[RMDB]
RNA sequence: GGGAACGACUCGAGUAGAGUCGAAAAGGGUUUUGCGAUCUUUAAGCAAAUGGCAGGUUCACCCCGUACGGUGCGGAAGUUCGCGCUUCCGUGAAACGCGAAAAUCGGACGGUGGCUGCAAGUCGCAUUGAAGGGAUCGCCUUCGGGCGAUCCCUAACCACAAUAAAAUGUUCGCAUUUUAUUGUGGAAAAGAAACAACAACAACAAC
Reactivity to DMS in 0.01 (KOAc 150mM, MgCl2 10mM, bicine 150mM(pH8.5), 24C), signal-to-noise 1, nucleotides 027 to 156: g000g000g020u000u010u000u010g000c040g040a030u010c020u000u000u000a090a190g030c050a060a050a050u000g020g040c040a030g000g000u010u020c070a090c030c010c020c010g010u000a040c040g020g000u010g010c040g010g020a080a050g000u000u000c260g000c300g030c000u000u000c010c080g060u010g000a020a040a050c040g000c000g010a060a060a080a090u000c020g010g000a080c100g060g010u000g000g040c050u000g000c030a060a050g000u010c000g010c000a110u000u000g010a100a080g010g010g040a070u010c000g000c000c000u000u000c250g060g000g050c000g030a010u010c000c020c000u000a000a010
Reactivity to 2A3 in 0.01 (KOAc 150mM, MgCl2 10mM, bicine 150mM(pH8.5), 24C), signal-to-noise 2, nucleotides 027 to 156: g050g040g000u040u090u050u040g010c010g020a040u070c040u090u160u170a070a040g030c020a050a090a150u150g060g020c010a010g100g000u110u140c040a030c000c020c000c000g010u020a010c050g010g000u030g010c000g000g010a030a000g020u040u230c080g030c060g000c140u020u030c000c000g000u000g060a150a190a020c170g020c010g130a050a010a000a120u090c020g010g010a040c140g010g030u040g020g020c010u000g010c020a030a010g030u010c010g020c040a020u010u080g080a040a040g000g020g000a000u010c000g000c000c000u040u070c160g070g020g000c010g000a010u000c000c000c000u000a010a010
Background
Conditions: 150 mM KOAc, 10 mM MgCl2 and 150 mM bicine (pH 8.5), 24 C. Chemical mapping of a 207-nucleotide RNA with DMS and 2A3. DMS (dimethyl sulfate) methylates the pairing face of unpaired adenines and cytosines. The 2A3 profile rests on 813 reads. For DMS, 2,453 sequencing reads were counted. The data come from the RNA Mapping Database (RMDB), library M2RFPK.